Source: RMDB library OK1LIB, as collected in RNAgym.
The record gives the reactivity of an RNA of 177 nucleotides to 2A3 and DMS.
The reactions ran in a buffer of 150 mM KOAc, 10 mM MgCl2 and 150 mM bicine (pH 8.5), at 24 C.
For DMS the reverse transcriptase was MarathonRT.
Values are in units of 0.01, from 0 to 300, in steps of 10.
For 2A3, 712 sequencing reads were counted.
RNA sequence: GGGAACGACUCGAGUAGAGUCGAAAAAGAUUGUGGCCGCUGUAGAUAUGUUCUUCCAUAUGUUCAAAAAGCAUGAGAAGGCCUCUUUCAGGUAUGGCACAAUAGUGUCAAGAUUUAAGGAUUGUGCUCGUUAAGAGUCCUUCGGGACUCUUAACGAAAAAGAAACAACAACAACAAC
Reactivity to 2A3 in 0.01 (KOAc 150mM, MgCl2 10mM, bicine 150mM(pH8.5), 24C), signal-to-noise 2, nucleotides 027 to 126: a000g050a020u000u010g040u030g180g210c000c010g000c010u030g090u060a000g080a040u140a010u280g100u160u180c000u000u000c000c000a000u000a000u300g080u030u180c210a050a020a000a010a030g010c020a000u000g070a040g000a190a010g010g000c000c000u000c000u010u030u010c000a000g010g040u150a050u190g070g020c000a000c000a090a110u000a090g180u120g070u020c040a120a050g050a090u000u070u290a050a000g210g020a080u010u080g020u060g030c000
Reactivity to DMS in 0.01 (KOAc 150mM, MgCl2 10mM, bicine 150mM(pH8.5), 24C), signal-to-noise 2, nucleotides 027 to 126: a140g000a040u000u000g070u000g020g050c000c040g000c050u010g000u040a020g030a080u010a010u030g000u010u060c000u000u010c000c010a080u000a060u020g030u020u000c090a050a050a220a180a060g010c020a040u000g000a170g040a100a030g000g000c000c070u020c000u030u010u000c010a060g000g020u010a060u090g000g000c040a070c000a110a010u000a050g000u000g050u020c040a020a040g000a040u020u030u040a050a210g020g040a130u040u000g000u020g000c100